[RMDB]
RNA sequence: GGGAACGACUCGAGUAGAGUCGAAAAAGAAUAGAUGACAAUGUCCUUCUUCAUGCACUCUCGAAGCACUUCAAUGAAGUCUUUACCACACGGACACCCAUCUGGAAAUCCAUCACCACAACACCCAUCAUGAAACGUUGUUCGCAACGUUUCAUGAAAAAGAAACAACAACAACAAC
Reactivity to DMS in 0.01 (KOAc 150mM, MgCl2 10mM, bicine 150mM(pH8.5), 24C), signal-to-noise 3, nucleotides 027 to 126: a010g000a090a060u030a040g000a030u020g010a030c050a190a050u000g000u010c010c010u000u020c120u010u010c080a040u000g000c080a040c020u000c030u000c060g010a040a050g010c060a000c050u010u000c040a070a160u020g000a050a130g020u020c070u010u000u000a090c060c050a100c060a090c060g000g010a040c050a050c000c000c010a060u020c060u020g030g000a030a060a060u000c090c040a060u010c030a060c010c000a060c070a030a080c180a010c060c010c000a230
Reactivity to 2A3 in 0.01 (KOAc 150mM, MgCl2 10mM, bicine 150mM(pH8.5), 24C), signal-to-noise 7, nucleotides 027 to 126: a000g160a040a060u170a070g080a100u090g020a060c090a110a060u080g030u040c010c000u020u080c010u040u020c020a040u060g010c030a050c070u020c010u030c040g070a060a000g020c080a020c030u060u050c050a090a250u150g040a020a020g020u000c010u030u100u110a130c030c010a030c020a000c090g020g000a010c000a010c010c010c000a040u040c020u040g040g030a050a080a030u020c000c000a030u030c040a010c040c020a040c010a100a010c010a060c020c000c000a020